[RMDB]
RNA sequence: GGGAACGACUCGAGUAGAGUCGAAAAUACUCAUGGGAAGUCGGCACAACUCCCGACUAACGGGGAGGUCCGCAGUUUAGCUUAUUGGUCGGAGCUGUUGUGCGGACGUCGAGUAACAGCUAGCCAACAUAGUCGCCUAAUUCGUUAGGCGACUAUGAAAAGAAACAACAACAACAAC
Reactivity to DMS in 0.01 (KOAc 150mM, MgCl2 10mM, bicine 150mM(pH8.5), 24C), signal-to-noise 3, nucleotides 027 to 126: u020a040c000u010c010a120u060g020g000g000a080a110g000u010c030g000g020c040a040c030a040a040c030u010c010c000c000g000a060c020u020a060a050c120g000g000g000g020a130g000g010u000c010c020g000c050a070g000u020u030u000a060g000c040u000u000a110u010u020g010g020u010c000g010g020a040g010c040u000g000u020u010g000u000g030c000g010g010a010c010g000u030c070g000a030g000u010a030a100c140a080g000c120u010a070g030c020c040a060a230
Reactivity to 2A3 in 0.01 (KOAc 150mM, MgCl2 10mM, bicine 150mM(pH8.5), 24C), signal-to-noise 2, nucleotides 027 to 126: u110a020c040u020c020a090u100g000g150g050a070a060g030u000c000g190g070c020a030c010a080a120c000u000c020c000c000g010a020c010u050a100a000c050g020g060g030g000a050g020g150u080c000c040g000c000a000g000u030u020u070a030g000c030u090u030a040u040u120g030g000u000c030g030g010a040g000c080u010g000u030u010g000u010g000c000g010g020a000c020g020u020c020g010a010g000u000a060a000c020a030g010c000u040a020g040c000c000a010a070